Conditions: 150 mM KOAc, 10 mM MgCl2 and 150 mM bicine (pH 8.5), 24 C. This 207-nucleotide RNA was probed chemically with 2A3. For 2A3, 650 sequencing reads were counted.

RNA sequence: GGGAACGACUCGAGUAGAGUCGAAAACUGGCUGUUAACGUACGGAAACCAUCCCGUUGCGUACGGAAACCAUCCUGGAGCCUUGCUCCAUCCGAAACGUACGAACAGCACAGGAUUAGCAGUGUCAUAUCCAUCCGAAACGUACGUCGACUGGAUGGCCGAAUGCUGUGUUCGCACAGCAUUCGGCAAAAGAAACAACAACAACAAC
Reactivity to 2A3 in 0.01 (KOAc 150mM, MgCl2 10mM, bicine 150mM(pH8.5), 24C), signal-to-noise 1, nucleotides 027 to 156: c020u000g020g010c000u060g000u030u010a240a000c000g000u000a000c000g050g110a200a010a010c010c010a010u060c030c000c030g000u000u000g000c000g000u020a000c000g050g000a100a050a030c050c020a080u200c000c020u000g000g010a000g000c010c090u080u170g010c010u040c020c000a090u140c080c030g150a090a050a040c030g000u000a000c000g000a010a000c020a000g010c030a060c060a150g040g000a050u060u120a040g020c100a080g070u050g070u170c010a040u070a030u130c060c000a010u000c000c010g150a070a090a010c000g000u000a000c010g120u090c100g050a000c000u010g000g000a000u010g030